RNA sequence: GGGAACGACUCGAGUAGAGUCGAAAAAAUUAUCUUCUCAAAACACAACCAAGAUUGUGCAAAUGACAUAGUCAAAGUUGACAUAAUGGUUCAUAGAAAUUGUUGAAGUCAGAAUUGGUGCAACGAGAGCUCUACCUUUGGUAUUUUAGGAUGGUAAAAUUUACCUAAUAUUCGUAUUAGGUAAAUUAAAAGAAACAACAACAACAAC
Reactivity to 2A3 in 0.01 (KOAc 150mM, MgCl2 10mM, bicine 150mM(pH8.5), 24C), signal-to-noise 4, nucleotides 027 to 156: a000a020u170u110a060u040c040u090u020c030u020c000a030a120a080a010c040a010c000a030a050c040c030a080a080g030a240u030u080g010u020g040c060a080a110a140u120g020a040c030a060u110a020g010u040c010a050a090a090g050u050u030g060a030c010a010u210a100a030u070g050g010u080u040c010a000u040a120g090a100a120a050u090u060g030u030u060g030a040a020g020u050c050a010g070a070a100u080u060g020g020u040g020c010a020a030c050g020a010g010a010g070c020u000c020u040a050c000c000u040u020u020g040g010u060a100u090u100u050u100a030g030g010a010u100g040g020u160a070a100
Reactivity to DMS in 0.01 (KOAc 150mM, MgCl2 10mM, bicine 150mM(pH8.5), 24C), signal-to-noise 3, nucleotides 027 to 156: a040a080u010u000a070u000c080u000u000c020u000c020a080a120a110a070c030a260c040a020a030c040c010a060a300g000a120u010u010g050u000g020c000a050a150a140u000g010a080c030a040u000a040g030u010c020a030a150a090g010u000u010g010a060c020a080u010a050a050u010g000g030u000u000c070a090u000a150g000a090a070a100u000u010g000u000u000g030a060a140g010u000c030a120g000a070a120u000u010g000g010u000g010c060a050a070c050g010a120g000a080g010c030u010c040u000a030c030c020u000u000u000g020g020u000a040u000u000u000u000a040g020g020a060u000g010g020u000a040a080